[RMDB]
RNA sequence: GGGAACGACUCGAGUAGAGUCGAAAAAUACCAUGGGGAGGUGACAGUUCCAUGGUUUAGAAAGGGGUGCUCCUACCUGGAGACAGAGACUGGCAUGAUGCAGGGGAUCCUACACAACACAUCCUCAGAUUCACGUACGGUUCGCCGUACGUGAAUCAAAAGAAACAACAACAACAAC
Reactivity to DMS in 0.01 (KOAc 150mM, MgCl2 10mM, bicine 150mM(pH8.5), 24C), signal-to-noise 1, nucleotides 027 to 126: a030u040a090c010c000a050u010g010g010g000g000a210g000g000u000g000a080c020a040g000u000u030c000c050a000u000g000g050u000u000u000a040g000a040a170a030g000g040g000g010u010g000c150u000c060c030u000a120c050c030u020g030g030a030g000a030c070a180g000a100g030a050c040u030g000g000c050a030u000g050a020u020g020c000a070g070g000g010g000a110u000c020c030u010a100c160a010c050a140a220c160a110c160a030u000c000c010u000c110a280
Reactivity to 2A3 in 0.01 (KOAc 150mM, MgCl2 10mM, bicine 150mM(pH8.5), 24C), signal-to-noise 2, nucleotides 027 to 126: a000u190a000c010c020a020u040g020g020g010g010a140g010g010u120g060a060c050a030g020u050u030c020c000a000u000g010g000u030u040u070a070g030a040a090a000g000g050g020g030u080g040c000u030c000c000u000a190c000c000u030g020g000a020g000a000c030a000g120a000g000a030c010u080g020g020c030a050u170g060a120u210g090c060a030g000g000g080g000a000u000c000c020u100a020c140a020c020a190a070c090a010c030a060u050c010c020u080c010a030

This 177-nucleotide RNA was probed chemically with DMS and 2A3. It was measured as part of the RMDB library OK1LIB. Reactivities are given for positions 27 through 126. Conditions: 150 mM KOAc, 10 mM MgCl2 and 150 mM bicine (pH 8.5), 24 C.